Description:
The data come from the RNA Mapping Database (RMDB), library OK2TRN. Chemical mapping of a 177-nucleotide RNA with DMS and 2A3. The 2A3 profile rests on 40,594 reads.
RNA sequence: GGGAACGACUCGAGUAGAGUCGAAAAGUCAACUUGUAUCCGUUCAGCCAGACCGUCGAAUCCGGCGCCAGUGUCGACGACUGCGUCGAGCAGAUUGAUAUCGGCGGGCCGGCGAUGGUGCGGGCCGGAUCUGUGUACUAUUCGUAGUACACAGAUCAAAAGAAACAACAACAACAAC
Reactivity to DMS in 0.01 (KOAc 150mM, MgCl2 10mM, bicine 150mM(pH8.5), 24C), signal-to-noise 9, nucleotides 027 to 126: g010u010c140a110a130c100u000u000g010u000a060u010c020c010g010u010u010c120a150g020c010c020a070g010a030c010c010g020u000c010g010a130a120u010c010c000g010g010c010g000c040c040a050g020u000g010u000c050g010a050c140g010a100c010u000g000c000g010u010c200g000a210g010c040a040g010a230u010u000g010a040u000a060u000c030g010g000c010g010g010g010c010c010g000g020c020g000a010u000g000g010u000g020c080g010g010g010c030c070g010
Reactivity to 2A3 in 0.01 (KOAc 150mM, MgCl2 10mM, bicine 150mM(pH8.5), 24C), signal-to-noise 9, nucleotides 027 to 126: g050u040c030a050a080c130u110u110g050u090a080u080c020c020g050u120u150c060a020g000c010c000a020g020a030c010c000g000u010c000g020a100a090u060c020c010g030g010c050g050c050c040a080g030u050g050u170c040g030a060c040g030a040c020u020g010c020g050u150c090g050a040g000c020a030g030a160u060u090g020a030u060a040u130c010g000g000c000g010g050g000c010c000g000g000c000g000a010u010g000g030u020g040c080g000g010g020c020c010g060